Structure probing data (2A3 and DMS) for a 207-nucleotide construct. DMS adducts were read by reverse transcription with MarathonRT. For 2A3, 1,990 sequencing reads were counted. 2A3 adducts were read by reverse transcription with SuperScript II with manganese.
RNA sequence: GGGAACGACUCGAGUAGAGUCGAAAACACCUCUGUGGUGCUGCCUGUGGACAAAGUCCAAGCCAGCCACCUCACCCACCUACAGGUGAGUGGGGAGCAGCCAGCGUGUCCAGUGGUUUACCCCAUCGCCACAGACUUGGUGAUGUGUCGAUGUGCAUCUAUCUCGUUUCUUCGGAAACGAGAUAGAAAAAGAAACAACAACAACAAC
Reactivity to 2A3 in 0.01 (KOAc 150mM, MgCl2 10mM, bicine 150mM(pH8.5), 24C), signal-to-noise 4, nucleotides 027 to 156: c060a020c000c010u000c030u040g110u180g030g040u090g030c050u050g010c020c010u140g040u080g040g000a040c110a300a300a050g030u040c020c010a000a030g050c030c000a040g080c020c040a200c010c020u010c000a010c000c000c000a020c000c010u210a270c120a100g030g020u000g010a000g010u000g000g000g010g010a000g000c000a000g000c040c010a020g010c030g060u060g080u040c020c000a020g020u030g050g020u060u090u250a220c020c020c000c010a000u010c000g020c000c000a030c010a040g010a090c050u120u250g130g050u300g030a060u040g010u030g010u020c000g020a010u030g120u140g170c010a040
Reactivity to DMS in 0.01 (KOAc 150mM, MgCl2 10mM, bicine 150mM(pH8.5), 24C), signal-to-noise 1, nucleotides 027 to 156: c110a040c000c000u000c180u000g000u050g000g070u000g000c010u000g020c020c030u010g030u000g010g000a080c060a100a080a190g000u000c040c050a110a050g040c020c020a220g000c020c010a260c000c000u080c000a020c010c000c000a050c010c020u020a170c300a260g070g010u000g000a000g040u000g030g010g000g000a050g020c020a140g000c000c070a110g000c040g000u000g000u000c010c020a100g010u020g020g010u000u020u000a160c010c050c020c020a070u000c020g010c040c000a000c080a130g010a120c060u000u000g050g010u000g040a120u000g000u000g000u000c010g000a070u000g000u000g010c130a170

The DMS profile rests on 2,295 reads.